[RMDB]
RNA sequence: GGGAACGACUCGAGUAGAGUCGAAAAAACAUUCCGAGGGGACCGUCCCUCGGCAAUGGCGAAUGGGACCCAGAACUCUCUCAGAAUCUAGGGAGAUCUCCCAGAUUCGAGAGAAAACUGGCUCUCCGAAAGUAGCCGUUCGCGGCUACUAAAAGAAACAACAACAACAAC
Reactivity to 2A3 in 0.01 (KOAc 150mM, MgCl2 10mM, bicine 150mM(pH8.5), 24C), signal-to-noise 3, nucleotides 027 to 129: a040a000c010a030u030u020c010c000g000a000g020g010g050g000a140c080c060g300u240c030c000c000u010c000g010g000c010a000a000u010g050g000c030g110a100a010u090g010g000g020a000c000c000c030a000g040a000a090c050u000c000u000c000u020c060a140g010a000a000u000c000u160a190g000g070g000a040g010a090u060c110u000c100c000c000a020g000a000u000u000c020g000a000g000a000g000a040a000a000a040c010u000g000g000c010u010c030u000c020c000g070a080a090
Reactivity to DMS in 0.01 (KOAc 150mM, MgCl2 10mM, bicine 150mM(pH8.5), 24C), signal-to-noise 3, nucleotides 027 to 129: a070a070c060a090u020u000c000c000g020a070g050g000g020g020a140c250c270g050u000c000c000c000u010c040g000g020c150a000a000u020g030g030c060g000a100a040u030g000g000g000a010c210c020c000a020g030a100a180c120u010c020u020c020u000c010a150g030a000a030u020c030u000a140g000g000g000a050g000a010u090c170u010c060c000c000a070g000a000u000u000c000g020a040g000a020g030a010a020a100a140c040u000g000g070c160u000c010u000c000c000g020a090a080